The record gives the reactivity of an RNA of 177 nucleotides to 2A3 and DMS.

RNA sequence: GGGAACGACUCGAGUAGAGUCGAAAAUGAAAGAGUUUCCUUUAACCUAUAUGGAAGCAAAGAACAAGAAUACAACCUUCCCAUAUGGUUGACUUAAUUAUUCCCUAGGUUCCUGGAAGCUAAAAAAAUGACAAACUUAAUUCGUUAAGUUUGUCAUAAAAGAAACAACAACAACAAC
Reactivity to 2A3 in 0.01 (KOAc 150mM, MgCl2 10mM, bicine 150mM(pH8.5), 24C), signal-to-noise 4, nucleotides 027 to 126: u170g050a030a050a060g170a010g000u010u010u000c000c000u000u020u010a000a000c000c010u030a030u020a060u280g010g030a020a020g040c130a150a060a060g060a070a040c080a090a020g090a170a040u150a140c020a020a010c010c000u040u070c060c040c020a060u080a050u140g010g000u000u010g010a010c000u020u010a020a040u090u100a050u050u020c010c010c000u010a010g000g000u010u000c010c010u010g000g020a010a010g000c020u100a110a110a030a000a000a000
Reactivity to DMS in 0.01 (KOAc 150mM, MgCl2 10mM, bicine 150mM(pH8.5), 24C), signal-to-noise 5, nucleotides 027 to 126: u020g010a120a110a130g000a050g020u000u000u000c020c020u000u000u000a010a020c020c000u010a030u010a090u010g010g000a040a020g010c220a070a070a130g000a090a100c210a040a060g000a120a140u000a130c020a020a040c050c010u000u000c100c040c080a100u010a050u000g000g020u000u000g000a090c040u000u000a010a120u010u000a080u000u000c000c000c180u000a060g010g000u000u000c150c060u000g020g000a020a010g010c030u010a000a000a040a070a070a040
The 2A3 profile rests on 6,196 reads. DMS adducts were read by reverse transcription with MarathonRT. The reactions ran in a buffer of 150 mM KOAc, 10 mM MgCl2 and 150 mM bicine (pH 8.5), at 24 C. 2A3 adducts were read by reverse transcription with SuperScript II with manganese.